Record summary
Chemical mapping of a 177-nucleotide RNA with 2A3.
RNA sequence: GGGAACGACUCGAGUAGAGUCGAAAAAGGAAGAGUUAUCUUUUCUUAUUAACACUGUCUUGAAGUCCAUUGAAUCAGGUCAACUGGAGACGUGGAUUUAUCGCACAGUGGAAGAGCACAAACCAUUGGAUCUUCACACAUUCGUGUGUGAAGAUCCAAAAGAAACAACAACAACAAC
Reactivity to 2A3 in 0.01 (KOAc 150mM, MgCl2 10mM, bicine 150mM(pH8.5), 24C), signal-to-noise 1, nucleotides 027 to 126: a050g010g000a000a000g030a000g050u000u180a250u060c000u000u090u010u000c000u100u000a100u060u060a020a020c000a000c000u030g060u080c000u020u300g090a100a050g000u000c000c000a060u120u170g040a030a040u000c000a000g030g240u200c020a080a050c010u040g000g020a000g000a010c040g000u000g000g000a000u110u000u040a050u110c040g000c100a000c000a000g000u000g000g000a190a130g000a000g050c020a020c170a120a130a050c100c060a090u000u040

The data come from the RNA Mapping Database (RMDB), library RFM100. Conditions: 150 mM KOAc, 10 mM MgCl2 and 150 mM bicine (pH 8.5), 24 C. For 2A3, 527 sequencing reads were counted.